[RMDB]
Structure probing data (DMS and 2A3) for a 207-nucleotide construct.
RNA sequence: GGGAACGACUCGAGUAGAGUCGAAAAUAAGUCAUGAUCAAGAGAGAAUCUCAACCUGUGAACCAAUUUCUAGAGUUGAGCCAGUUUGCAGACCCAGAUCUCCUUGAAUGAGGGAGUGGCCAAGUUCCACUGAUUAAGGACCUUGAUAAGACACCUACGUAAUACCGGUAUUCGUACCGGUAUUACGAAAAGAAACAACAACAACAAC
Reactivity to DMS in 0.01 (KOAc 150mM, MgCl2 10mM, bicine 150mM(pH8.5), 24C), signal-to-noise 2, nucleotides 027 to 156: u010a070a110g000u010c040a070u000g020a130u020c020a040a080g020a200g020a080g020a070a100u000c020u000c010a040a090c040c010u010g000u000g020a060a070c020c100a100a050u000u000u010c020u000a060g000a070g040u000u000g010a060g020c080c050a150g000u000u000u000g000c050a120g000a090c040c040c050a090g010a080u000c040u000c000c010u000u020g020a080a110u010g010a130g020g030g000a080g040u000g010g000c040c040a030a050g000u000u000c010c010a120c100u010g000a100u020u020a120a130g030g000a080c030c010u000u020g010a100u000a040a050g010a110c060a130c040c020u000a140
Reactivity to 2A3 in 0.01 (KOAc 150mM, MgCl2 10mM, bicine 150mM(pH8.5), 24C), signal-to-noise 4, nucleotides 027 to 156: u180a050a000g040u010c020a030u140g080a070u050c000a020a010g100a000g010a000g050a180a180u010c010u000c020a020a010c010c010u020g040u050g040a040a020c040c010a070a100u060u130u100c070u100a110g040a030g180u020u050g010a000g000c010c000a020g000u020u050u040g040c010a020g000a070c030c010c010a010g000a050u000c010u010c010c020u020u020g070a070a020u110g000a070g040g020g010a030g010u020g000g000c040c030a090a020g010u060u010c010c010a020c030u060g050a150u140u120a060a060g030g000a000c000c000u010u020g030a020u070a100a040g020a010c020a020c060c020u010a000
DMS adducts were read by reverse transcription with MarathonRT.
Conditions: 150 mM KOAc, 10 mM MgCl2 and 150 mM bicine (pH 8.5), 24 C.